Source: RMDB library OK3TST, as collected in RNAgym. An RNA of 207 nucleotides, treated with 2A3 and DMS and read out base by base. 2A3 adducts were read by reverse transcription with SuperScript II with manganese. The DMS profile rests on 5,498 reads.
[RMDB]
RNA sequence: GGGAACGACUCGAGUAGAGUCGAAAACUUGUGAUGACAGGUGAAGGAAUUACUGCUGAUAAAGGUCUCGAUUAUGGGUUUGUCUACCGUACGGCAGAAUCUGAUACACUAGACAAAGUUUGUCUUCAACUUUUAAAGCGAUUGAGACGUGGCUCUAUGCAUAGUAUCAGUUCGCUGAUACUAUGCAAAAAGAAACAACAACAACAAC
Reactivity to 2A3 in 0.01 (KOAc 150mM, MgCl2 10mM, bicine 150mM(pH8.5), 24C), signal-to-noise 3, nucleotides 027 to 156: c030u010u040g020u080g080a110u080g050a060c020a030g040g000u030g050a050a010g020g040a020a050u090u080a110c020u050g010c040u020g040a130u120a100a110a040g050g000u020c030u050c070g030a020u090u060a100u280g050g010g030u030u100u040g040u000c030u030a070c020c040g040u040a030c000g010g000c010a020g040a020a020u030c010u020g050a110u060a090c060a040c090u100a040g020a030c000a010a090a030g020u020u060u020g030u050c000u030u040c020a070a060c040u000u030u130u290a090a100a020g020c040g140a130u040u070g010a010g000a020c050g010u070g010g000c010u000c000u020a030
Reactivity to DMS in 0.01 (KOAc 150mM, MgCl2 10mM, bicine 150mM(pH8.5), 24C), signal-to-noise 3, nucleotides 027 to 156: c020u010u000g060u000g000a130u000g020a090c020a060g020g060u010g010a120a140g020g010a130a110u010u000a070c050u000g010c040u010g000a150u000a030a070a090g030g020u000c010u000c020g000a060u000u000a080u000g020g000g020u000u000u010g010u030c020u010a040c080c050g030u010a070c080g020g010c020a130g020a100a060u000c030u020g020a170u010a070c060a070c050u000a030g010a080c040a020a050a120g000u000u000u000g010u000c030u000u010c030a060a050c050u000u000u010u000a040a110a070g030c030g000a160u000u000g000a080g010a040c030g030u000g000g010c010u000c040u010a290